An RNA of 207 nucleotides, treated with DMS and 2A3 and read out base by base. Source: RMDB library OK3TST, as collected in RNAgym. DMS (dimethyl sulfate) methylates the pairing face of unpaired adenines and cytosines. For DMS the reverse transcriptase was MarathonRT.
RNA sequence: GGGAACGACUCGAGUAGAGUCGAAAACUGAGUAUACACUCAAAGGAAAAUAGAUCAUCAUACCAUGAAGACACAUGCAUUCAUGUGUUUAUCACCGCACUAUUCACAAUGCAGAGACAUGGAAUCAACCUCGGUGCCAUAUAGUGGAUUAGAUAAAUCAAAACUGAUAGUUCGCUAUCAGUUUUGAAAAAGAAACAACAACAACAAC
Reactivity to DMS in 0.01 (KOAc 150mM, MgCl2 10mM, bicine 150mM(pH8.5), 24C), signal-to-noise 3, nucleotides 027 to 156: c050u000g010a080g020u000a130u000a070c090a070c020u010c040a060a090a100g060g020a080a060a080a120u010a040g000a110u000c040a060u000c060a150u010a130c020c020a070u010g000a140a180g010a010c010a020c010a040u000g030c190a190u020u000c030a010u000g040u010g030u000u000u000a060u000c030a120c030c040g000c050a040c030u000a110u000u010c110a050c070a070a080u000g020c000a080g000a150g020a120c030a060u000g010g010a070a060u010c040a060a140c050c020u000c020g020g010u000g020c020c020a040u000a070u000a090g040u000g000g010a110u000u000a070g000a120u000a020a060a190
Reactivity to 2A3 in 0.01 (KOAc 150mM, MgCl2 10mM, bicine 150mM(pH8.5), 24C), signal-to-noise 7, nucleotides 027 to 156: c020u010g000a000g020u060a110u100a220c090a050c030u040c040a050a100a050g110g030a060a090a040a050u190a070g070a090u080c030a010u020c010a010u100a140c040c010a030u040g030a040a010g010a000c000a000c000a020u010g030c050a070u070u220c010a010u130g020u010g000u010u030u030a090u050c020a010c040c000g020c010a020c060u040a060u070u050c030a020c020a140a090u060g010c030a030g060a010g020a230c010a020u020g010g040a030a030u060c030a030a060c010c020u040c040g020g000u030g010c030c020a050u080a010u020a080g050u030g030g000a010u030u040a080g030a050u120a070a090a050
Description
The reactions ran in a buffer of 150 mM KOAc, 10 mM MgCl2 and 150 mM bicine (pH 8.5), at 24 C.